The record gives the reactivity of an RNA of 177 nucleotides to 2A3 and DMS. The DMS profile rests on 11,564 reads. For 2A3, 13,828 sequencing reads were counted.
[RMDB]
RNA sequence: GGGAACGACUCGAGUAGAGUCGAAAAGUAUUACGCGAUUGAUCCGUUGUUAAAAGUACUAAAUCUGCACAAUCUGUAAGUUUACUACCUUCGAAAUUUGUGAUGGCAACGACAUAUGCACCAUGAGCACAUACUAAGACUUCGGUCUUAGUAUGUGAAAAGAAACAACAACAACAAC
Reactivity to 2A3 in 0.01 (KOAc 150mM, MgCl2 10mM, bicine 150mM(pH8.5), 24C), signal-to-noise 9, nucleotides 027 to 126: g050u040a050u150u130a080c080g020c050g080a090u020u060g070a070u030c060c030g000u030u030g030u040u080a080a120a040a050g070u040a030c050u090a050a080a130u090c040u080g010c050a010c020a070a080u030c040u090g100u180a060a060g010u030u060u050a090c060u060a050c010c000u030u070c060g130a150a170a180u100u150u070g080u050g040a090u070g030g000c010a020a000c020g050a010c020a030u120a040u130g030c020a020c030c020a040u090g050a010g050
Reactivity to DMS in 0.01 (KOAc 150mM, MgCl2 10mM, bicine 150mM(pH8.5), 24C), signal-to-noise 5, nucleotides 027 to 126: g020u010a070u020u040a040c090g000c060g000a070u010u000g010a060u020c060c040g020u010u010g000u020u010a040a060a100a100g010u020a070c080u000a040a060a090u020c040u010g000c030a040c130a090a070u020c080u020g020u010a030a040g000u000u020u030a050c120u010a080c090c040u000u030c090g000a050a060a050u010u000u010g020u010g000a090u000g000g000c020a040a060c050g000a040c080a060u010a040u020g010c040a100c030c030a050u010g000a110g020